The record gives the reactivity of an RNA of 177 nucleotides to 2A3 and DMS.
It was measured as part of the RMDB library 15KREP.
DMS adducts were read by reverse transcription with MarathonRT.
For DMS, 1,413 sequencing reads were counted.
[RMDB]
RNA sequence: GGGAACGACUCGAGUAGAGUCGAAAAAAGUUGAUAUGGAUUUACUCCGAGGAGACGAACUACCACGAACAGGGAAAACUCUACCCGUGGCGUCUCCGUUUGACGAGUAAGUCCUAUGUCAACAAAAGAUAGAGUACUAGUUCGCUAGUACUCUAUCAAAAGAAACAACAACAACAAC
Reactivity to 2A3 in 0.01 (KOAc 150mM, MgCl2 10mM, bicine 150mM(pH8.5), 24C), signal-to-noise 2, nucleotides 027 to 126: a000a020g000u000u010g000a010u000a010u020g010g000a010u010u010u000a000c000u000c010c000g010a020g000g010a010g010a000c010g000a050a050c080u170a040c090c010a010c010g030a060a020c040a060g020g020g030a000a120a210a290c020u010c000u040a030c000c010c010g000u000g020g000c000g000u000c000u000c000c010g000u030u030u060g010a010c000g000a000g000u000a000a000g000u000c000c000u010a010u040g000u000c000a000a010c030a000a060a000a000
Reactivity to DMS in 0.01 (KOAc 150mM, MgCl2 10mM, bicine 150mM(pH8.5), 24C), signal-to-noise 2, nucleotides 027 to 126: a060a070g010u000u000g000a000u000a030u000g000g000a030u000u000u000a000c020u000c000c010g020a100g000g010a010g010a040c000g010a070a040c090u020a300c000c000a020c040g010a070a300c190a100g000g010g000a090a080a110a130c010u010c020u000a090c220c140c000g000u000g000g000c020g000u000c020u000c000c000g010u000u000u000g000a120c300g010a040g010u000a000a020g010u000c000c000u000a030u000g000u000c000a000a000c000a060a090a100a060